Conditions: 150 mM KOAc, 10 mM MgCl2 and 150 mM bicine (pH 8.5), 24 C. Structure probing data (2A3) for a 207-nucleotide construct. For 2A3 the reverse transcriptase was SuperScript II with manganese. 2A3 is a SHAPE reagent: it acylates the 2'-hydroxyl of flexible nucleotides of all four kinds. The data come from the RNA Mapping Database (RMDB), library OK3TST. For 2A3, 402 sequencing reads were counted.
[RMDB]
RNA sequence: GGGAACGACUCGAGUAGAGUCGAAAAGCUGCAGCUGCGGCGAAAGCGUUCAAGGGGAUAGUCAAAACUUGCUCGUCUCUAGCAAGGUGUACCACACCGGGGAAAUGGAAGAUAAGUACAAGAUUUUUAUUAAAAAUGCACCCUUUGACCCCACGAAGCCGUGAAUGGAAUUCGUUCCAUUCACGGCAAAAGAAACAACAACAACAAC
Reactivity to 2A3 in 0.01 (KOAc 150mM, MgCl2 10mM, bicine 150mM(pH8.5), 24C), signal-to-noise 1, nucleotides 027 to 156: g030c060u060g010c020a090g040c030u290g030c000g080g010c000g110a000a030a000g030c080g040u080u020c000a040a020g000g020g010g010a100u100a100g010u150c080a000a000a070a120c040u000u010g000c010u010c060g080u020c010u030c020u040a010g180c110a060a040g030g000u030g010u050a280c030c070a030c010a000c040c000g000g000g030g040a000a080a080u060g020g010a060a100g010a100u090a150a060g060u120a100c030a080a020g010a040u080u000u100u150u080a130u090u220a170a120a040a000a000u130g010c010a080c000c000c030u000u020u020g010a030c000c000c000c000a060c070g050a070a030